[RMDB]
RNA sequence: GGGAACGACUCGAGUAGAGUCGAAAAAGGCAUCGGUUUUAUGUUAGCCAUAAUUUGGGCAGUAAUAAUGUUUGGAAUAGCUUAUACACUUCCAAGAUAUAAAAAAGGGAAAAGCUGUGCAUAUGUACCAAAAUACAGUUUUCGAACUGUAUUUUGGAAAAGAAACAACAACAACAAC
Reactivity to 2A3 in 0.01 (KOAc 150mM, MgCl2 10mM, bicine 150mM(pH8.5), 24C), signal-to-noise 3, nucleotides 027 to 126: a000g070g000c030a040u100c060g070g040u030u050u040u090a120u110g090u030u100a040g020c020c010a030u100a120a150u110u070u090g020g000g000c010a030g050u030a030a040u080a100a040u120g060u050u030u040g020g000a050a020u040a050g000c020u080u080a080u040a160c080a030c020u020u000c000c000a010a020g090a070u110a000u150a160a180a030a020a050a060g060g010g050a000a090a000a040g010c030u020g000u060g000c030a030u090a060u250g050u120a080
Reactivity to DMS in 0.01 (KOAc 150mM, MgCl2 10mM, bicine 150mM(pH8.5), 24C), signal-to-noise 4, nucleotides 027 to 126: a080g000g020c030a040u000c070g030g010u000u000u000u000a050u020g000u010u000a110g030c070c020a090u010a080a120u010u000u000g020g000g010c050a050g000u000a060a080u010a050a060u010g010u000u000u000g000g020a080a060u000a100g020c070u000u000a090u010a170c090a060c110u000u010c020c020a030a020g000a050u000a090u010a020a030a050a060a080a120g020g010g010a090a050a090a070g010c040u000g010u000g020c030a040u000a050u000g010u010a200